[RMDB]
RNA sequence: GGGAACGACUCGAGUAGAGUCGAAAACUAGGAACACUGGGGUCCAGUGGAUCCGUGGGACUACCCUCUCCACCCUCCCAACACACUCCUUCCCCCCUGCGGGGCUUCCCCAUAAGAUGGCAGGAACCAUAGGUAAGACCUUCGGGUCUUACCUAUGAAAAGAAACAACAACAACAAC
Reactivity to DMS in 0.01 (KOAc 150mM, MgCl2 10mM, bicine 150mM(pH8.5), 24C), signal-to-noise 1, nucleotides 027 to 126: c090u010a150g030g010a140a120c030a030c030u000g020g010g000g030u040c040c020a070g050u010g000g010a120u010c020c030g000u000g000g020g010a190c050u000a120c040c030c010u000c030u000c020c030a190c040c020c020u000c020c010c010a060a140c120a020c150a150c080u000c010c020u000u000c010c010c000c070c000c020u010g000c060g000g000g010g020c150u000u010c010c010c000c050a120u010a030a140g010a140u010g010g000c040a030g020g000a090a100c130